[RMDB]
RNA sequence: GGGAACGACUCGAGUAGAGUCGAAAAAUCACCGUUGGGGAACCCCAUACGGCAACGGCGUAGAAGUAAAUGCUAACCAAUCCGUGGUAUCUACGCGACGGAGCAUCCACGGAUAACUCUAACAAGGCUAAGCGUCUCGGUUUCGACCGAGACGCAACUAAAUCGAUUACUUCGGUAAUCGAUUUAGAAAAGAAACAACAACAACAAC
Reactivity to 2A3 in 0.01 (KOAc 150mM, MgCl2 10mM, bicine 150mM(pH8.5), 24C), signal-to-noise 1, nucleotides 027 to 156: a000u030c030a000c000c000g000u000u020g040g020g000g140a140a170c080c010c010c010a080u180a180c020g020g000c010a070a030c040g010g000c000g020u010a000g010a070a010g040u090a040a080a040u070g010c080u070a100a090c080c040a070a030u000c000c000g030u000g050g000u020a030u010c010u000a000c030g030c000g020a060c070g040g000a000g030c010a010u000c000c000a020c050g000g000a000u000a000a000c020u020c050u210a090a110c060a080a040g080g060c040u190a120a060g020c030g010u000c000u000c000g010g050u070u030u170c190g080a040c000c000g000a000g020a000c000g010c000a000a000